[RMDB]
RNA sequence: GGGAACGACUCGAGUAGAGUCGAAAAGAUCCGGCCCCAGGAUCACCGGUAAUCCGUUGGGCGGCACCUGGAUUGCGCCGCGGGUAACGCCUUCGCCGGGCAGUUGCCGAUCCGGCCAGCGGUGCUGCCCGCACACGUAAUUCGUUACGUGUGCGGGAAAAGAAACAACAACAACAAC
Reactivity to DMS in 0.01 (KOAc 150mM, MgCl2 10mM, bicine 150mM(pH8.5), 24C), signal-to-noise 4, nucleotides 027 to 126: g000a040u000c010c000g000g010c040c000c030c050a300g000g010a020u000c040a210c100c020g010g000u010a080a080u010c060c080g020u010u010g010g000g030c000g000g010c020a010c010c000u010g040g010a130u010u000g010c140g030c010c000g020c150g020g010g010u010a020a010c010g010c010c020u000u010c300g020c220c260g000g000g020c020a080g030u010u010g020c000c000g000a100u010c160c010g000g000c000c030a060g000c080g000g000u000g010c020u000g000
Reactivity to 2A3 in 0.01 (KOAc 150mM, MgCl2 10mM, bicine 150mM(pH8.5), 24C), signal-to-noise 2, nucleotides 027 to 126: g020a020u030c010c010g100g070c060c000c010c000a010g010g010a010u010c010a000c030c040g110g100u120a100a090u050c040c050g030u130u180g050g000g030c020g030g000c010a010c000c020u140g210g060a300u060u140g010c110g010c040c000g030c180g020g030g000u000a010a000c000g020c010c010u190u150c110g090c160c040g020g000g000c050a120g000u010u030g000c020c010g020a120u030c040c000g020g020c000c020a040g020c030g030g000u010g000c010u010g000